RNA sequence: GGGAACGACUCGAGUAGAGUCGAAAAACUGAAGUGGUAACACCAGGUUUAAGCGUAGGACAGGGAGCAACAGAGCCGAAACGAAAGUGAAGCGAUUGAGCUGGGAAAUUAGUAUGAGGUUGGAAAUAACUAUUCGCCAUUUCGAUGGCGAAUAGUUAAAAGAAACAACAACAACAAC
Reactivity to 2A3 in 0.01 (KOAc 150mM, MgCl2 10mM, bicine 150mM(pH8.5), 24C), signal-to-noise 2, nucleotides 027 to 126: a000c050u000g000a070a000g040u000g000g080u240a080a030c040a040c030c000a000g010g010u020u060u060a090a000g040c040g000u040a000g000g000a000c000a050g000g050g000a010g040c040a000a080c000a060g120a000g000c040c040g030a020a050a030c050g070a120a100a000g060u100g030a050a000g020c030g070a070u000u190g010a040g010c000u030g000g000g070a040a150a000u210u040a110g120u140a220u190g030a050g060g000u060u040g000g020a000a040a100u010
Reactivity to DMS in 0.01 (KOAc 150mM, MgCl2 10mM, bicine 150mM(pH8.5), 24C), signal-to-noise 2, nucleotides 027 to 126: a030c080u030g000a120a210g000u000g010g030u010a110a120c050a050c030c010a280g020g000u030u010u010a070a140g020c000g000u000a030g010g010a030c080a110g000g000g000a030g000c020a050a090c230a090g000a280g040c010c000g000a110a080a040c040g020a080a050a060g000u000g020a020a110g010c030g010a090u020u030g000a140g000c000u000g000g000g030a050a050a040u000u000a110g030u000a000u000g010a010g000g010u010u000g010g000a030a080a130u020
Notes: Conditions: 150 mM KOAc, 10 mM MgCl2 and 150 mM bicine (pH 8.5), 24 C. An RNA of 177 nucleotides, treated with 2A3 and DMS and read out base by base. The DMS profile rests on 1,794 reads. It was measured as part of the RMDB library RFM100.